[RMDB]
An RNA of 177 nucleotides, treated with DMS and 2A3 and read out base by base. It was measured as part of the RMDB library OK2TST. DMS adducts were read by reverse transcription with MarathonRT.
RNA sequence: GGGAACGACUCGAGUAGAGUCGAAAAUGUCCACAAUCACGCAAGUGACUGGUAAGUCAGGUGAAGAAAUCGUAGAUCAUACCUGCAGAAAGGACUUGCAUGAUCUGAUUCGAUCCAACAUAAAAAAGGAUAUUAGCGAUUUCGAUCGCUAAUAUCCAAAAGAAACAACAACAACAAC
Reactivity to DMS in 0.01 (KOAc 150mM, MgCl2 10mM, bicine 150mM(pH8.5), 24C), signal-to-noise 2, nucleotides 027 to 126: u010g010u000c010c020a110c070a100a010u000c000a010c040g020c140a050a040g010u000g000a100c020u000g010g020u010a110a130g000u010c060a010g010g000u010g040a180a100g000a100a070a110u020c110g030u040a070g010a030u000c020a160u000a040c020c000u000g010c050a070g000a110a110a050g000g010a040c000u010u000g010c030a030u020g000a010u000c060u020g010a080u000u000c180g000a060u000c070c080a050a110c140a110u010a010a020a040a020a120a130
Reactivity to 2A3 in 0.01 (KOAc 150mM, MgCl2 10mM, bicine 150mM(pH8.5), 24C), signal-to-noise 2, nucleotides 027 to 126: u050g040u010c000c010a020c020a040a030u030c020a000c030g000c010a010a020g000u000g090a300c030u030g000g080u140a090a020g060u100c020a020g030g000u040g100a130a160g100a050a230a030u240c160g090u230a070g020a100u060c020a010u090a060c000c000u000g000c020a000g200a020a080a020g020g020a010c000u000u030g000c020a010u010g000a010u030c040u010g010a120u060u120c060g020a030u050c060c000a060a060c020a150u270a150a080a020a030a030a000